[RMDB]
RNA sequence: GGGAACGACUCGAGUAGAGUCGAAAAAAUUGGGUUAAAACGGUGGGGGACGAUCCCGUAACAUCCGUCCUAACGGCGACAGACUGCACGGCCCUGCCUCUUAGGUGUGUUCAAAGAACAGUCGUUCUGGCCCCUAAGGCGUUCGCGCCUUAGGGAAACUUCUCUACAAAUUCGUUUGUAGAGAAGUAAAAGAAACAACAACAACAAC
Reactivity to 2A3 in 0.01 (KOAc 150mM, MgCl2 10mM, bicine 150mM(pH8.5), 24C), signal-to-noise 2, nucleotides 027 to 156: a000a020u110u090g020g010g010u070u060a020a070a080a040c050g000g000u030g030g050g000g000g020a020c030g010a060u100c050c010c020g010u020a030a040c040a100u070c040c010g040u000c020c020u030a080a010c030g050g000c020g030a000c010a050g090a020c040u070g010c080a020c060g040g000c040c020c000u020g020c030c010u060c110u060u150a020g000g000u050g000u020g000u150u070c080a130a140a000g020a060a020c020a050g020u000c020g020u060u010c010u030g060g010c020c000c000c020u000a000a000g000g000c010g020u050u020c130g000c000g020c050c000u000u000a000g020g000g000a020a000
Reactivity to DMS in 0.01 (KOAc 150mM, MgCl2 10mM, bicine 150mM(pH8.5), 24C), signal-to-noise 1, nucleotides 027 to 156: a060a080u010u000g000g030g050u000u000a040a020a060a050c010g000g000u010g010g000g020g070g010a120c080g020a120u000c050c020c030g020u010a070a060c050a080u000c000c010g020u000c000c020u000a070a050c110g000g000c000g000a160c070a110g020a090c040u000g050c080a150c060g020g020c020c050c020u000g030c010c030u000c040u000u020a030g010g040u000g000u000g000u000u000c050a040a100a090g030a070a120c040a060g000u000c020g000u000u000c030u020g010g000c060c000c000c090u000a000a030g000g030c010g060u000u010c300g010c020g010c000c020u000u010a010g030g010g010a000a020
Chemical mapping of a 207-nucleotide RNA with 2A3 and DMS. For 2A3 the reverse transcriptase was SuperScript II with manganese. DMS adducts were read by reverse transcription with MarathonRT.